The record gives the reactivity of an RNA of 207 nucleotides to 2A3.
Values cover nucleotides 27 to 156.
Conditions: 150 mM KOAc, 10 mM MgCl2 and 150 mM bicine (pH 8.5), 24 C.
For 2A3 the reverse transcriptase was SuperScript II with manganese.

RNA sequence: GGGAACGACUCGAGUAGAGUCGAAAACUUCUAGAUAUCCAGAUAGAGAUUCGAUGGUUUGUCAUCGCAUCCUAACGUACGGCAAAUAUUUUGAGACGUUGGCACAUGAUGAAUUAGAGAAUUACAUAGGCAACAUCCGAAACGAUAUCAUGAACAAGUCCCAAUAACCCUUCGGGGUUAUUGGGACAAAAGAAACAACAACAACAAC
Reactivity to 2A3 in 0.01 (KOAc 150mM, MgCl2 10mM, bicine 150mM(pH8.5), 24C), signal-to-noise 1, nucleotides 027 to 156: c040u070u030c010u050a030g000a040u010a010u050c000c030a030g020a120u010a040g190a010g070a060u030u020c000g010a010u100g110g050u050u040u020g110u140c030a020u010c070g060c100a110u100c000c000u100a020a000c020g010u110a010c040g050g010c120a030a110a020u230a110u090u220u110u060g040a050g000a040c020g010u000u020g020g010c020a000c020a030u060g010a030u060g010a000a060u030u060a040g010a000g040a100a010u080u080a050c120a110u060a030g030g000c050a030a060c000a040u090c010c010g000a040a020a000c000g000a000u000a000u040c010a030u090g030a100a050c070a190a200